RNA sequence: GGGAACGACUCGAGUAGAGUCGAAAACAAGAUCCGUGGAUAGCAGCCCUAUCAAUAUCUAGGAGAACUGUGCUAUGUUUAGAAGAUUAGGUAGUCUCUAAACAGAACAAUUUACCUGCUGAACAAAAAAAUCCAAUGGCGUUCGCGCCAUUGGAAAGAAAACGAAGAAGUUCGCUUCUUCGUUUUCAAAAGAAACAACAACAACAAC
Reactivity to 2A3 in 0.01 (KOAc 150mM, MgCl2 10mM, bicine 150mM(pH8.5), 24C), signal-to-noise 2, nucleotides 027 to 156: c040a030a060g030a130u040c040c050g040u110g040g010a100u050a110g040c030a000g020c020c020c020u070a020u110c030a070a090u100a070u240c060u040a010g030g030a040g010a080a040c030u030g010u040g040c040u030a020u080g010u000u000u000a080g000a300a030g000a040u080u050a020g020g010u040a010g010u010c000u000c000u010a000a000a010c000a010g010a080a010c070a030a030u010u080u070a060c010c000u030g050c080u160g090a100a010c070a060a080a040a040a010a020a040u000c000c000a000a000u000g000g000c000g010u050u010c240g010c000g010c080c000a000u010u020g000g000a000a000a000
Reactivity to DMS in 0.01 (KOAc 150mM, MgCl2 10mM, bicine 150mM(pH8.5), 24C), signal-to-noise 1, nucleotides 027 to 156: c000a180a160g000a060u010c050c010g010u000g040g010a050u000a090g050c060a090g080c090c000c050u010a160u000c040a110a170u000a100u020c050u010a090g070g020a300g000a050a100c010u000g050u000g010c010u010a250u000g000u000u000u000a000g010a040a190g020a060u010u000a180g020g040u000a090g010u000c000u000c010u000a000a000a000c000a050g000a070a020c000a100a040u000u020u000a070c050c000u000g010c090u020g000a130a140c050a000a000a040a110a070a160a160u000c000c000a010a040u020g010g040c000g000u000u000c300g020c050g020c000c000a000u020u020g020g010a010a010a170

Conditions: 150 mM KOAc, 10 mM MgCl2 and 150 mM bicine (pH 8.5), 24 C. Structure probing data (2A3 and DMS) for a 207-nucleotide construct. For DMS, 1,318 sequencing reads were counted. For 2A3, 1,256 sequencing reads were counted. For DMS the reverse transcriptase was MarathonRT.